[RMDB]
RNA sequence: GGGAACGACUCGAGUAGAGUCGAAAAUGAUGACGUUCUAAACACCAUGUCUCUAGGUAGAACAGCUCUCAAAACUGUGGCAUUUAGGCCUCCGGACACGGCUGCAUCAAACAUGAUGCAGUCUAGCCUGUGUUUCCGGAUUCGUCCGGAAACACAGAAAAGAAACAACAACAACAAC
Reactivity to 2A3 in 0.01 (KOAc 150mM, MgCl2 10mM, bicine 150mM(pH8.5), 24C), signal-to-noise 4, nucleotides 027 to 126: u180g050a030u160g030a000c060g030u070u070c010u100a100a190a030c100a070c050c000a090u140g080u000c020u010c030u080a110g000g010u070a020g020a040a020c020a020g030c000u000c000u020c030a060a070a050a070c050u040g040u090g070g030c040a100u090u140u100a130g050g070c000c000u000c010c040g040g000a010c020a010c100g000g000c000u010g000c000a000u000c000a040a130a200c110a190u140g000a000u000g000c000a000g000u010c000u000a000g000c020
Reactivity to DMS in 0.01 (KOAc 150mM, MgCl2 10mM, bicine 150mM(pH8.5), 24C), signal-to-noise 1, nucleotides 027 to 126: u010g000a050u020g000a070c100g000u050u000c020u050a050a010a120c180a090c000c000a040u100g000u030c000u000c000u050a020g030g020u000a050g030a040a020c030a050g000c090u000c000u000c050a020a050a060a160c030u000g020u000g050g000c050a080u010u000u000a130g000g000c050c000u020c090c050g040g000a000c090a060c240g000g010c000u030g000c000a000u000c000a150a110a100c210a220u000g000a000u000g000c000a000g000u000c000u000a040g000c110